[RMDB]
RNA sequence: GGGAACGACUCGAGUAGAGUCGAAAAUCGCGAUCGCGGCGUUCUCGCCGGCCGGGCCGAACAUCGCCACGAUCACCGCGGUGGGCACGACCAUCGUGCCGAUCCCGGUGUGGUGCCGGUACGUCGACGUCGUGCUGCUCGGCGCCGGUGGUGGUGGCCCUUCGUCAACAUUCGUGUUGACGAAGGGAAAAGAAACAACAACAACAAC
Reactivity to 2A3 in 0.01 (KOAc 150mM, MgCl2 10mM, bicine 150mM(pH8.5), 24C), signal-to-noise 1, nucleotides 027 to 156: u030c000g000c030g090a150u120c110g000c030g080g000c030g010u080u040c120u030c170g000c020c000g010g020c010c000g040g010g010c040c040g000a000a020c000a010u010c040g020c000c000a050c040g090a040u060c010a020c020c020g000c030g000g000u110g040g030g050c000a000c050g030a060c050c040a150u230c000g000u020g000c000c030g040a060u070c060c040c000g030g070u100g010u100g020g050u050g020c040c000g000g000u000a020c020g010u140c240g060a110c090g140u090c000g030u040g010c000u010g080c010u020c050g010g080c050g030c010c070g050g000u040g030g010u050g000g000u020g030g060